[RMDB]
Conditions: 150 mM KOAc, 10 mM MgCl2 and 150 mM bicine (pH 8.5), 24 C. The record gives the reactivity of an RNA of 207 nucleotides to 2A3 and DMS.

RNA sequence: GGGAACGACUCGAGUAGAGUCGAAAACUGCAUCUGUGGAGGACGAAGCAUAUUUCUGUUUCUGGAGGAUUAUUUGUAAUCUGCCGGAAAGUCUUGCAGGUGGCUGGGAUAUGUUCAGUCUGGUAGAAAAAUCAGGAGUCCUUCGGGACUCCUGAAAGAUAACAUGUUAGUUCGCUAACAUGUUAUCAAAAGAAACAACAACAACAAC
Reactivity to 2A3 in 0.01 (KOAc 150mM, MgCl2 10mM, bicine 150mM(pH8.5), 24C), signal-to-noise 1, nucleotides 027 to 156: c050u040g030c020a050u020c030u060g010u010g030g060a240g080g000a010c010g010a010a010g000c030a000u010a030u020u090u040c060u140g120u050u050u000c010u000g010g000a040g070g010a010u030u060a020u020u120u100g020u000a010a020u010c030u050g090c010c010g000g010a040a010a000g010u020c010u040u020g020c030a010g030g010u020g000g000c020u070g000g000g000a000u000a000u010g010u000u010c030a040g010u000c010u010g120g020u160a070g140a050a110a050a070a040u000c000a000g010g000a000g020u000c040c000u070u130c190g040g010g000a000c000u020c000c010u000g000a000a010a000
Reactivity to DMS in 0.01 (KOAc 150mM, MgCl2 10mM, bicine 150mM(pH8.5), 24C), signal-to-noise 1, nucleotides 027 to 156: c060u000g000c060a050u010c020u010g030u010g010g000a220g010g010a060c000g020a080a100g000c020a030u000a050u010u000u000c040u010g000u000u000u000c000u000g020g000a030g000g010a020u010u000a030u000u010u020g010u000a030a020u010c000u010g000c000c020g030g000a020a050a070g000u000c010u000u020g020c040a030g010g000u000g010g010c040u000g000g030g010a060u000a020u000g000u000u000c040a300g000u000c010u010g000g060u000a110g000a040a080a070a110a160u000c000a020g010g000a070g000u000c030c000u000u020c260g060g050g010a010c010u000c000c000u000g000a010a010a080

The DMS profile rests on 3,386 reads.